[RMDB]
RNA sequence: GGGAACGACUCGAGUAGAGUCGAAAAGAAAGAAAAAGAAUGUGCCGGUUUGGCAGUGCUUUGCUAGCUGGCUGUUCAAUAAAUGAUUCCAGCAGCUGGUUGCACGCCCCACUGUCACAAUCCAAAAUGAGUUCCUAGUAUUCGUACUAGGAACUCAAAAAGAAACAACAACAACAAC
Reactivity to DMS in 0.01 (KOAc 150mM, MgCl2 10mM, bicine 150mM(pH8.5), 24C), signal-to-noise 3, nucleotides 027 to 126: g000a080a090a080g030a060a080a140a090a150g000a010a050u010g000u000g000c030c000g000g030u000u030u010g000g000c030a070g040u000g010c000u050u000u000g000c020u000a000g040c020u000g000g000c000u000g000u000u000c020a040a130u060a070a110a200u020g030a080u020u010c300c000a010g000c000a010g000c010u000g010g030u010u010g020c000a000c020g020c000c000c110c110a020c000u000g000u010c020a010c030a050a070u000c020c130a060a110a130a100
Reactivity to 2A3 in 0.01 (KOAc 150mM, MgCl2 10mM, bicine 150mM(pH8.5), 24C), signal-to-noise 4, nucleotides 027 to 126: g080a020a050a030g180a020a100a020a010a010g140a050a080u050g020u010g010c030c000g060g000u020u000u030g080g040c210a140g000u010g000c000u210u280u300g020c010u000a000g000c010u000g080g000c000u000g010u010u000c040a030a010u140a230a130a100u170g040a100u190u010c010c000a000g000c000a000g000c000u000g030g000u080u060g000c000a000c000g010c010c000c010c010a010c000u000g000u000c000a000c000a040a040u010c050c010a020a020a000a300
The data come from the RNA Mapping Database (RMDB), libraries RFM100 and RFMREP. An RNA of 177 nucleotides, treated with DMS and 2A3 and read out base by base. For 2A3 the reverse transcriptase was SuperScript II with manganese. For DMS the reverse transcriptase was MarathonRT. 2A3 is a SHAPE reagent: it acylates the 2'-hydroxyl of flexible nucleotides of all four kinds.